[RMDB]
RNA sequence: GGGAACGACUCGAGUAGAGUCGAAAACGCCGUAUUAUCAGGGUAUUGGCCCGGCAUGGACGAAAGAGAGUGUGCUACCGGGUGGCGCCAUUGAAGGCGACCGCGACGAUUAUGCCGCUCGCCUGCGGCCGAGCCGCACGUUCGCGUGCGGCUCGGCAAAAGAAACAACAACAACAAC
Reactivity to 2A3 in 0.01 (KOAc 150mM, MgCl2 10mM, bicine 150mM(pH8.5), 24C), signal-to-noise 1, nucleotides 027 to 126: c130g000c010c010g000u090a090u300u160a260u300c160a100g000g100g050u130a010u140u300g010g000c110c000c000g000g000c000a090u160g070g120a100c030g120a030a250a100g140a000g000a070g040u010g000u040g110c000u000a060c090c000g070g000g000u170g060g000c000g030c000c000a070u040u300g100a000a000g000g000c060g000a010c000c300g010c000g060a100c000g000a000u220u180a090u300g000c040c000g000c000u030c000g040c000c000u010g000c100g010